Chemical mapping of a 177-nucleotide RNA with DMS and 2A3. For DMS, 22,808 sequencing reads were counted. Reactivities are given for positions 27 through 126. For 2A3 the reverse transcriptase was SuperScript II with manganese.
RNA sequence: GGGAACGACUCGAGUAGAGUCGAAAACACACAAGGUUCGCCUUGUGUGCAAGAAUAGACGAAUACUACGGUAGAAGUAUUCAGGUCACAUAACUACGGAAAUGGCGUUCUGCUUCGGCAGAACGAACCACCAUUAUUGAUUCGUCAAUAAUGGUGGAAAAGAAACAACAACAACAAC
Reactivity to DMS in 0.01 (KOAc 150mM, MgCl2 10mM, bicine 150mM(pH8.5), 24C), signal-to-noise 9, nucleotides 027 to 126: c010a000c000a010c000a000a000g000g020u000u020c260g030c010c000u000u000g010u000g010u000g000c060a080a070g000a130a110u000a090g010a060c040g000a030a010u000a010c000u000a090c070g020g010u010a070g010a110a030g010u000a000u000u000c010a080g020g020u000c020a100c150a080u010a070a080c080u000a090c130g010g000a060a060a090u000g000g010c010g010u000u000c000u000g000c000u000u010c180g030g000c000a010g000a010a000c000g010a030a080
Reactivity to 2A3 in 0.01 (KOAc 150mM, MgCl2 10mM, bicine 150mM(pH8.5), 24C), signal-to-noise 9, nucleotides 027 to 126: c010a000c000a000c000a000a010g030g020u040u070c130g130c040c000u000u000g000u000g000u000g000c010a030a030g080a070a090u150a130g030a020c020g010a010a000u010a010c020u020a030c050g200g070u190a070g060a160a010g020u020a010u020u010c050a030g160g030u030c020a030c020a140u180a190a070c070u130a050c120g130g090a070a090a120u190g180g010c000g000u000u000c000u000g010c000u020u050c160g090g000c010a000g000a000a000c000g000a000a010